Structure probing data (2A3 and DMS) for a 207-nucleotide construct. The 2A3 profile rests on 1,276 reads. The RNA was probed in 150 mM KOAc, 10 mM MgCl2 and 150 mM bicine (pH 8.5) at 24 C.
RNA sequence: GGGAACGACUCGAGUAGAGUCGAAAAUUUGGGGCAGUAUGGCACACUGAGACUAGCCCUAGGCUAACUAUAUAAAUGUGCAUACAGUAUAAAUUAUUUCGGUCUCCAUUCUCAUUUUGUAAAAUGAAAGACUUAGAUUAUCGUCUAUUAAUGAUAAACCAUAAAUUACCUUCGGGUAAUUUAUGGUAAAAGAAACAACAACAACAAC
Reactivity to 2A3 in 0.01 (KOAc 150mM, MgCl2 10mM, bicine 150mM(pH8.5), 24C), signal-to-noise 3, nucleotides 027 to 156: u090u060u060g000g020g000g010c010a020g040u040a060u040g130g000c010a020c010a010c120u110g050a010g060a160c020u010a010g010c000c000c030u040a100g000g010c000u020a020a020c010u010a030u010a020u100a300a200a070u070g010u000g010c000a010u050a050c000a000g160u100a120u040a230a190a070u220u130a110u100u130u040c020g070g020u000c010u000c030c000a050u070u010c030u000c020a110u020u190u190u210g130u100a100a160a050a060u110g050a060a080a100g020a010c010u100u040a040g010a050u100u150a100u170c030g030u000c010u080a110u250u080a230a060u130g070a020u050a100a130
Reactivity to DMS in 0.01 (KOAc 150mM, MgCl2 10mM, bicine 150mM(pH8.5), 24C), signal-to-noise 1, nucleotides 027 to 156: u000u000u000g000g000g050g040c040a120g000u000a030u000g000g090c010a050c020a020c040u040g020a300g030a110c110u000a060g020c010c000c080u000a080g050g000c020u000a020a070c030u010a100u020a170u000a100a080a040u000g030u000g000c010a040u000a050c010a130g040u000a170u000a090a090a090u000u000a100u010u000u000c020g010g030u000c000u010c050c010a050u000u000c030u020c050a200u000u000u000u020g030u000a040a040a020a030u000g000a070a060a020g000a050c000u000u020a050g010a170u010u010a020u010c050g020u000c040u000a140u020u000a080a060u010g010a120u010a070a090